An RNA of 177 nucleotides, treated with DMS and 2A3 and read out base by base. DMS (dimethyl sulfate) methylates the pairing face of unpaired adenines and cytosines. Reactivities are given for positions 27 through 126. For DMS, 1,747 sequencing reads were counted. The data come from the RNA Mapping Database (RMDB), library RFM100.
[RMDB]
RNA sequence: GGGAACGACUCGAGUAGAGUCGAAAAAGCCCCCACCGGCAGAGAUAUGGUGGACUUGGACCUGGCACAGCAGUGGCGCAGGGAAAUGAAUGUCCGUUUGACGGCGGAGACUCGUGUCACUACCUUCACUUCAUUUUGCGUUCGCGCAAAAUGAAGUAAAAGAAACAACAACAACAAC
Reactivity to DMS in 0.01 (KOAc 150mM, MgCl2 10mM, bicine 150mM(pH8.5), 24C), signal-to-noise 1, nucleotides 027 to 126: a090g000c030c030c000c020c000a060c080c030g000g020c130a090g000a130g020a090u060a040u030g010g000u000g010g000a170c010u000u000g000g010a140c040c010u020g000g000c090a010c030a070g000c010a050g010u000g020g000c050g020c000a070g000g000g020a030a080a060u020g000a050a080u010g000u000c010c020g020u000u000u040g050a180c140g000g000c000g000g000a050g030a040c040u000c070g010u010g000u020c030a100c030u060a130c060c040u010u020c190
Reactivity to 2A3 in 0.01 (KOAc 150mM, MgCl2 10mM, bicine 150mM(pH8.5), 24C), signal-to-noise 3, nucleotides 027 to 126: a030g010c030c000c030c000c000a010c000c010g050g000c060a040g060a010g020a180u110a060u260g020g010u050g000g000a000c010u020u060g060g040a000c000c020u010g030g010c070a020c010a070g110c030a060g030u050g120g020c060g020c060a070g000g000g110a040a060a030u290g090a080a020u150g050u070c000c020g000u010u080u180g110a050c030g010g000c000g010g000a020g020a020c020u030c030g000u010g010u010c000a000c050u050a060c000c000u050u060c050